[RMDB]
RNA sequence: GGGAACGACUCGAGUAGAGUCGAAAAUUCCUGUUCGCAGGAAAAAAAAUCCUAAGUCCCAUUACUAUCCAUCUAAGGACGAUGAGUAGGUCGGAAACGACCUACGAGUCCUGUGGACGAAUAAUGGGAUAUGGAGUUAUUUUCGUUUCGACGAAAACAUGUCGUCUUAAUUCGUUAAGACGACAUGAAAAGAAACAACAACAACAAC
Reactivity to DMS in 0.01 (KOAc 150mM, MgCl2 10mM, bicine 150mM(pH8.5), 24C), signal-to-noise 3, nucleotides 027 to 156: u000u000c000c010u000g010u000u020c150g050c020a180g000g010a020a010a000a010a120a150a130a150u000c010c000u000a100a240g010u010c000c000c020a040u000u000a030c040u000a130u020c010c000a020u020c090u020a200a030g010g020a010c000g010a170u010g020a300g030u000a010g010g030u000c010g010g010a180a160a260c010g030a010c000c000u000a000c000g000a140g020u000c000c000u000g020u000g010g000a020c020g010a040a020u000a040a000u000g010g010g020a020u000a070u000g000g010a100g010u000u000a080u000u000u000u010c030g010u000u000u000c070g010a160c050g010a070a050a140a280
Reactivity to 2A3 in 0.01 (KOAc 150mM, MgCl2 10mM, bicine 150mM(pH8.5), 24C), signal-to-noise 2, nucleotides 027 to 156: u040u020c020c000u030g040u060u070c140g000c050a060g160g000a020a000a000a010a010a010a000a060u020c020c010u030a150a010g030u000c000c000c010a000u000u000a020c080u040a020u000c010c000a030u040c040u210a090a050g000g010a010c030g230a300u180g030a040g030u000a000g010g000u000c000g030g050a140a060a040c020g000a000c000c000u010a000c000g000a010g000u000c000c000u000g000u000g000g020a020c040g030a170a100u000a020a000u010g000g020g010a010u000a020u030g010g010a020g070u190u100a090u040u050u020u060c030g020u080u090u150c120g090a050c020g000a010a140a000a010